Structure probing data (2A3 and DMS) for a 207-nucleotide construct. DMS adducts were read by reverse transcription with MarathonRT. For DMS, 4,570 sequencing reads were counted. 2A3 adducts were read by reverse transcription with SuperScript II with manganese. It was measured as part of the RMDB library OK3TST. The 2A3 profile rests on 1,386 reads.
[RMDB]
RNA sequence: GGGAACGACUCGAGUAGAGUCGAAAAUAGGAUUGCAACCCCUGCCUUUUUUUGUUUUCCAUUUGCUUGGUAGAUCUUCCUCCAUCCUUUUAUUUUGAGCCUAUGUGUGUCUCUGCACAUGAGAUGGGUUUCCUGAAUACGGAACACUGAUGGGUCACGUCAUUUAAUACUUCGGUAUUAAAUGACGAAAAGAAACAACAACAACAAC
Reactivity to 2A3 in 0.01 (KOAc 150mM, MgCl2 10mM, bicine 150mM(pH8.5), 24C), signal-to-noise 2, nucleotides 027 to 156: u140a010g030g000a040u090u130g040c040a070a140c020c000c000c030u020g050c030c040u060u050u050u050u040u110u250g040u080u100u070u010c030c010a080u080u090u140g030c070u030u050g030g000u040a080g020a170u030c020u070u020c020c000u000c020c000a040u020c020c000u010u100u110u110a130u070u120u080u070g050a040g000c020c010u050a080u090g040u000g020u010g030u020c030u000c040u220g000c060a030c010a050u030g020a020g020a040u050g020g060g010u010u040u020c000c010u020g040a050a020u120a110c050g000g030a030a000c010a010c050u040g000a050u070g040g010g000u010c030a020
Reactivity to DMS in 0.01 (KOAc 150mM, MgCl2 10mM, bicine 150mM(pH8.5), 24C), signal-to-noise 1, nucleotides 027 to 156: u000a060g070g000a090u000u000g010c000a110a110c070c030c010c040u000g010c020c000u010u000u000u010u010u020u000g020u050u000u000u000c040c020a170u000u010u010g010c010u000u000g000g000u000a050g010a070u010c030u010u000c030c010u010c020c030a060u000c030c020u000u010u000u020a100u020u030u020u010g010a080g030c020c010u010a070u000g050u010g020u000g020u000c070u000c100u000g010c040a050c020a040u000g020a090g030a100u000g020g020g010u000u000u000c010c030u010g010a110a100u000a070c140g020g000a050a090c010a040c010u010g010a050u000g010g020g020u000c050a160